This 177-nucleotide RNA was probed chemically with 2A3 and DMS. Source: RMDB library OK1LIB, as collected in RNAgym. The RNA was probed in 150 mM KOAc, 10 mM MgCl2 and 150 mM bicine (pH 8.5) at 24 C.
[RMDB]
RNA sequence: GGGAACGACUCGAGUAGAGUCGAAAAUUACAUAAGUCUAACACCUUGUUUCGGACUAACAAGGCCGAAUGGAGGAUGGCCGGACCUCCAUAGUUAGACGUCCGAGAACCAGCCGAAAUGAAAAAGACAGUAUAUGCGUCUUCGGACGCAUAUACUGAAAAGAAACAACAACAACAAC
Reactivity to 2A3 in 0.01 (KOAc 150mM, MgCl2 10mM, bicine 150mM(pH8.5), 24C), signal-to-noise 3, nucleotides 027 to 126: u160u090a010c050a020u120a190a050g000u000c000u020a020a000c020a010c020c000u000u010g130u010u030u090c150g140g080a150c060u050a040a000c020a010a000g020g000c070c020g230a120a000u000g000g000a000g000g000a050u080g010g000c020c000g000g090a080c000c000u000c000c000a000u000a000g010u000u030a000g000a000c000g010u020c020c020g080a050g020a080a070c000c000a000g000c000c040g010a060a000a140u250g050a020a140a060a000a000g110a020
Reactivity to DMS in 0.01 (KOAc 150mM, MgCl2 10mM, bicine 150mM(pH8.5), 24C), signal-to-noise 2, nucleotides 027 to 126: u000u050a070c100a050u030a110a130g000u030c000u000a000a050c020a300c010c020u000u000g000u000u000u000c090g010g000a080c100u000a040a020c030a000a000g000g000c120c240g020a110a070u010g010g010a010g030g000a040u010g000g040c000c010g000g000a270c000c000u070c010c000a010u000a040g000u000u010a000g000a000c020g040u020c010c020g000a090g020a100a070c000c040a060g030c010c050g040a090a070a000u010g010a040a030a120a010a110g010a190